Chemical mapping of a 177-nucleotide RNA with DMS and 2A3. The RNA was probed in 150 mM KOAc, 10 mM MgCl2 and 150 mM bicine (pH 8.5) at 24 C. It was measured as part of the RMDB library OK1LIB. Values cover nucleotides 27 to 126.

RNA sequence: GGGAACGACUCGAGUAGAGUCGAAAAGGAAGGGCGUGCUAUUUGUUUACAUCCAUUAGUUUGUAAGGGCUUCAAUGCAGACUUUGACGGGGAUCAAAUGGCUGUUCAUGUGCCUUUAUCUGCAGAGGCAAGCGUACUUGUUCGCAAGUACGCUUGCAAAAGAAACAACAACAACAAC
Reactivity to DMS in 0.01 (KOAc 150mM, MgCl2 10mM, bicine 150mM(pH8.5), 24C), signal-to-noise 2, nucleotides 027 to 126: g030g010a110a010g000g000g000c020g000u000g000c010u030a050u000u000u000g000u070u020u010a140c040a020u020c040c030a300u050u020a070g020u000u000u020g000u000a050a100g050g000g000c120u030u050c070a080a000u020g030c030a000g020a010c030u010u000u000g000a030c120g000g000g000g020a090u000c040a000a000a050u010g000g000c020u010g010u000u000c090a070u000g000u000g000c020c040u000u000u030a050u030c010u040g010c040a110g020a200g000
Reactivity to 2A3 in 0.01 (KOAc 150mM, MgCl2 10mM, bicine 150mM(pH8.5), 24C), signal-to-noise 2, nucleotides 027 to 126: g040g030a020a060g010g020g000c050g040u050g000c010u030a070u060u040u010g100u050u030u020a100c060a110u060c040c000a040u080u040a030g040u010u020u070g050u010a060a090g100g020g000c100u180u120c040a050a080u120g000c000a000g010a030c000u050u000u010g060a100c110g000g000g010g100a060u000c020a000a000a050u010g010g000c020u010g030u050u080c070a070u100g040u050g060c000c000u030u000u030a080u000c080u080g040c050a030g010a020g140